Description:
An RNA of 177 nucleotides, treated with 2A3 and DMS and read out base by base. For DMS the reverse transcriptase was MarathonRT. Reactivities are given for positions 27 through 126. For 2A3, 5,308 sequencing reads were counted.

[RMDB]
RNA sequence: GGGAACGACUCGAGUAGAGUCGAAAAUGGGCUGCUGCAGUUGAUGAAGCGUUCCCUCUCGAUGAAGCAGAAGAUGUUACUGAAUCUGUGCAAGAAGAAGCACAACCAGUAGAAGUACCUGUUGAAGCGUUAUACCAUACUUCGGUAUGGUAUAACGAAAAGAAACAACAACAACAAC
Reactivity to 2A3 in 0.01 (KOAc 150mM, MgCl2 10mM, bicine 150mM(pH8.5), 24C), signal-to-noise 4, nucleotides 027 to 126: u080g030g010g000c020u080g000c010u030g000c110a060g020u160u080g090a120u090g030a070a020g070c000g010u030u000c000c010c000u020c010u010c000g090a100u070g050a050a000g000c020a000g020a060a020g060a070u090g020u110u020a010c010u010g020a040a050u040c060u060g000u010g010c010a030a030g080a080a010g070a050a000g080c010a010c000a020a020c020c000a000g010u010a010g020a080a010g030u050a090c010c000u020g020u030u030g030a030a010g000
Reactivity to DMS in 0.01 (KOAc 150mM, MgCl2 10mM, bicine 150mM(pH8.5), 24C), signal-to-noise 6, nucleotides 027 to 126: u010g020g000g010c060u010g020c030u000g000c040a150g020u000u000g000a070u000g000a060a130g010c040g010u000u000c000c000c000u020c070u000c020g000a080u000g000a170a070g000c020a020g000a110a070g020a110u020g010u000u000a010c010u000g000a130a090u000c130u010g000u010g000c030a070a160g010a160a130g000a190a140g010c000a010c010a040a060c120c010a010g000u000a020g000a080a090g000u000a130c070c010u010g000u010u010g000a150a100g000